[RMDB]
RNA sequence: GGGAACGACUCGAGUAGAGUCGAAAAGAUAUGGACAUAGACGGGAGCGAGGGUGUCGGAAACGACAUUUCGCGACGAUCGUUCAUGUCCUAAGUCAAAACGGUUUCAACCUUCGGGUUGAAACCGACAUAGGAUUCGGGUUCGCCCGAAUCCUAUGAAAAGAAACAACAACAACAAC
Reactivity to DMS in 0.01 (KOAc 150mM, MgCl2 10mM, bicine 150mM(pH8.5), 24C), signal-to-noise 2, nucleotides 027 to 126: g000a040u010a300u000g000g000a020c000a000u010a080g000a010c000g000g010g010a050g000c000g010a030g010g020g020u000g000u000c000g030g010a040a070a090c020g000a000c000a010u000u000u000c000g010c000g010a090c280g000a060u000c000g000u000u000c090a010u010g010u000c000c000u000a020a090g000u020c010a080a110a090a210c040g010g010u000u020u000c000a020a010c010c000u000u010c270g020g020g010u000u000g000a010a000a000c000c000g000a020
Reactivity to 2A3 in 0.01 (KOAc 150mM, MgCl2 10mM, bicine 150mM(pH8.5), 24C), signal-to-noise 1, nucleotides 027 to 126: g010a010u080a010u100g000g010a000c000a000u030a070g010a000c020g000g010g050a090g010c020g010a050g060g240g080u050g030u020c000g010g000a010a010a040c010g000a000c000a000u020u030u050c020g000c030g090a160c000g000a060u040c010g000u060u070c040a010u020g000u000c000c020u000a050a000g020u020c080a050a000a030a220c030g000g050u010u000u010c020a000a040c000c000u070u220c300g130g000g000u000u000g000a010a010a000c010c000g000a000
An RNA of 177 nucleotides, treated with DMS and 2A3 and read out base by base.
2A3 adducts were read by reverse transcription with SuperScript II with manganese.
Source: RMDB library TTRDES, as collected in RNAgym.
Conditions: 150 mM KOAc, 10 mM MgCl2 and 150 mM bicine (pH 8.5), 24 C.